[RMDB]
RNA sequence: GGGAACGACUCGAGUAGAGUCGAAAAUGGACUGCAUAUACGACAGUAUUCCCCUAAGACUGUAAUGAAGCUACAAAAAUCCUAUCACCUAGUGAUGUCUUGCGAUCCUUACCCAAGGAGGUCUUGGCUUACGUGUAUGUGUAUCUUAAUUUUUGAGGGAUCAAUUAGAGUUCGCUCUAAUUGAUCCAAAAGAAACAACAACAACAAC
Reactivity to 2A3 in 0.01 (KOAc 150mM, MgCl2 10mM, bicine 150mM(pH8.5), 24C), signal-to-noise 4, nucleotides 027 to 156: u140g020g040a030c050u070g030c040a010u070a000u010a110c090g030a040c050a020g020u010a100u100u150c030c010c000c000u030a060a030g030a030c020u010g040u130a070a070u160g040a070a010g030c050u100a050c120a050a100a060a020a050u040c020c010u050a040u080c020a030c030c070u060a020g020u020g130a030u060g070u040c010u110u090g020c050g060a080u010c010c000u000u060a110c040c030c000a020a000g020g020a020g020g000u000c000u020u040g040g020c000u010u070a010c020g010u020g020u030a040u040g000u030g010u020a100u010c030u060u240a260a300u130u100u120u070u070g090a100g040
Reactivity to DMS in 0.01 (KOAc 150mM, MgCl2 10mM, bicine 150mM(pH8.5), 24C), signal-to-noise 2, nucleotides 027 to 156: u020g010g010a100c030u000g000c020a090u010a090u010a080c030g000a140c030a060g030u000a190u000u000c000c020c040c030u020a080a110g010a070c020u020g090u000a080a090u010g000a090a110g020c010u010a090c050a010a040a090a070a100u000c030c010u000a060u000c040a040c080c080u010a100g000u010g020a050u000g010u010c040u000u010g010c060g030a100u000c010c000u000u000a110c100c080c060a060a110g010g000a120g000g000u000c050u010u000g040g030c060u000u010a040c040g000u000g030u000a040u010g030u000g010u000a140u000c050u000u000a110a110u000u000u010u020u010g000a300g000